[RMDB]
RNA sequence: GGGAACGACUCGAGUAGAGUCGAAAACUGUGGAAAGGGCCAGGGUAGCCACCUGGACAAGGGAUGCAGUGUGCCCAGGCACUAAAGUGGGAAGAGCAAAGUAAUGUUCAGGUGACAAUGGAGCAGAAGUAUGCAAAACGUUCGCGUUUUGCAUACUAAAAGAAACAACAACAACAAC
Reactivity to 2A3 in 0.01 (KOAc 150mM, MgCl2 10mM, bicine 150mM(pH8.5), 24C), signal-to-noise 2, nucleotides 027 to 126: c010u010g040u070g080g040a190a070a070g020g060g010c050c050a060g000g030g030u050a030g060c000c000a000c000c010u000g010g000a000c020a020a030g110g000g040a030u100g000c010a030g040u020g080u030g130c000c020c020a020g130g000c040a010c140u160a080a070a160g100u080g010g000g050a100a070g050a030g060c020a050a010a070g060u090a160a050u060g000u000u010c010a030g000g000u010g010a010c030a000a050u120g030g000a060g000c010a020g040a090
Reactivity to DMS in 0.01 (KOAc 150mM, MgCl2 10mM, bicine 150mM(pH8.5), 24C), signal-to-noise 2, nucleotides 027 to 126: c040u010g000u000g010g010a070a070a140g030g000g010c030c070a060g010g000g010u000a110g020c110c040a090c000c010u000g000g010a050c050a050a130g010g000g030a230u000g030c070a020g030u010g000u000g000c060c000c030a110g000g000c080a060c110u020a030a060a100g010u000g010g020g010a130a070g000a070g010c040a060a060a140g000u000a110a080u000g020u000u000c030a030g000g010u000g000a050c020a050a080u000g000g000a040g000c090a080g000a080
Structure probing data (2A3 and DMS) for a 177-nucleotide construct. 2A3 adducts were read by reverse transcription with SuperScript II with manganese. The data come from the RNA Mapping Database (RMDB), library OK2TST. The DMS profile rests on 1,678 reads. In probing experiments dimethyl sulfate is read out at A N1 and C N3, which are open when not base-paired.